This 177-nucleotide RNA was probed chemically with DMS and 2A3. For 2A3 the reverse transcriptase was SuperScript II with manganese. The 2A3 profile rests on 2,781 reads. The data come from the RNA Mapping Database (RMDB), library OK1LIB. As a SHAPE reagent, 2A3 marks flexible, mostly unpaired nucleotides at the ribose 2'-OH. For DMS the reverse transcriptase was MarathonRT.
RNA sequence: GGGAACGACUCGAGUAGAGUCGAAAACAAGUUGGUGAUGAGUAUUGCUAUGGAGGGCACACAAAUGAGGAUGAUUCCAACUUUGCUCACUGGACAGAGGCUCGCAUCAUGCUAGACAACAUCAACAGCCGAUCAAAUAGUUCGCUAUUUGAUCGGCAAAAGAAACAACAACAACAAC
Reactivity to DMS in 0.01 (KOAc 150mM, MgCl2 10mM, bicine 150mM(pH8.5), 24C), signal-to-noise 2, nucleotides 027 to 126: c050a090a170g020u020u000g000g000u000g030a150u040g000a050g050u040a020u010u000g050c040u000a020u000g040g000a130g000g030g000c040a040c070a220c060a120a090a000u000g070a300g000g010a070u000g020a250u080u040c020c000a020a300c200u000u000u040g000c050u020c000a070c020u000g000g000a110c230a060g000a210g000g040c000u000c070g000c000a070u050c000a130u020g000c000u000a120g000a130c110a070a010c020a040u000c010a100a020c060a200
Reactivity to 2A3 in 0.01 (KOAc 150mM, MgCl2 10mM, bicine 150mM(pH8.5), 24C), signal-to-noise 4, nucleotides 027 to 126: c060a030a050g010u020u000g030g050u030g010a080u060g040a090g050u090a100u150u150g010c090u110a050u070g040g010a040g050g010g010c030a040c000a000c010a070a110a050u140g010a040g050g010a050u110g040a080u200u030c030c000a020a030c010u070u030u070g060c020u020c020a070c080u080g060g060a030c080a100g070a080g130g000c000u000c030g050c020a110u110c000a010u070g000c000u030a040g000a090c040a050a020c000a050u030c000a000a010c000a010